[RMDB]
Source: RMDB library OK3TST, as collected in RNAgym. This 207-nucleotide RNA was probed chemically with 2A3. For 2A3, 305 sequencing reads were counted. 2A3 adducts were read by reverse transcription with SuperScript II with manganese. Conditions: 150 mM KOAc, 10 mM MgCl2 and 150 mM bicine (pH 8.5), 24 C.
RNA sequence: GGGAACGACUCGAGUAGAGUCGAAAAUGUAUCACCAACACCUUUUAAUGUCUUGAGGACAAAUGAGUCAGUCUGCACCAUACUAUUUUCCGAUGUCAAGGCCUUCAAACUAGUCAACUGCUCUAUAUUUCCACAAUCAAUUGAUCUAUUUUAGUCCCUCUCCCGGUGGAUUCGUCCACCGGGAGAGAAAAGAAACAACAACAACAAC
Reactivity to 2A3 in 0.01 (KOAc 150mM, MgCl2 10mM, bicine 150mM(pH8.5), 24C), signal-to-noise 1, nucleotides 027 to 156: u080g000u040a160u060c080a040c120c000a030a100c000a050c000c000u000u190u160u300a110a060u090g000u010c030u080u240g060a090g010g140a010c040a000a100a030u100g100a000g040u000c010a000g000u050c040u000g040c010a090c040c010a030u010a110c010u030a190u100u090u040u070c010c000g000a000u130g050u050c000a040a000g030g000c000c000u020u060c030a100a160a080c110u000a000g130u030c010a010a000c000u080g000c000u000c010u000a060u000a030u140u110u030c040c060a000c030a050a180u150c010a000a060u210u050g120a050u020c010u140a140u080u070u050u050a100g080u060c030c000